Annotation
Structure probing data (2A3 and DMS) for a 177-nucleotide construct. For DMS the reverse transcriptase was MarathonRT. The DMS profile rests on 1,741 reads. Conditions: 150 mM KOAc, 10 mM MgCl2 and 150 mM bicine (pH 8.5), 24 C.
RNA sequence: GGGAACGACUCGAGUAGAGUCGAAAAGUGCGAACGGUGCGAACCGCCCGCACGGCGCGACGGUCGGCAUCGCUUACGUGCUCGGCCGCGACAAGCGGCGCGCGGAGCUCGUCGCGCUCGCCGACGAGCCUGCCGGACGUUUCGACGUCCGGCAGGCAAAAGAAACAACAACAACAAC
Reactivity to 2A3 in 0.01 (KOAc 150mM, MgCl2 10mM, bicine 150mM(pH8.5), 24C), signal-to-noise 2, nucleotides 027 to 126: g030u010g010c020g030a120a010c030g040g060u110g040c030g040a130a050c020c010g020c020c000c040g000c000a000c000g070g000c100g000c030g030a180c050g060g050u070c030g050g050c060a070u090c020g010c040u070u070a100c060g020u020g000c060u120c200g120g000c010c000g000c020g040a110c000a060a100g040c010g050g000c060g010c040g050c030g110g020a010g000c010u000c040g010u000c000g010c000g000c000u020c030g040c000c000g040a090c040g030a050
Reactivity to DMS in 0.01 (KOAc 150mM, MgCl2 10mM, bicine 150mM(pH8.5), 24C), signal-to-noise 2, nucleotides 027 to 126: g030u010g000c000g000a050a050c020g000g000u020g000c300g000a190a040c040c030g010c040c020c020g020c000a000c020g000g000c080g020c000g020a050c030g010g000u000c030g010g000c010a040u000c040g000c050u010u000a110c060g010u000g020c030u000c080g010g000c000c000g020c010g020a190c080a110a190g030c030g000g010c030g000c040g020c040g020g000a090g010c010u000c020g020u000c260g000c010g010c030u000c120g000c040c000g020a050c090g000a110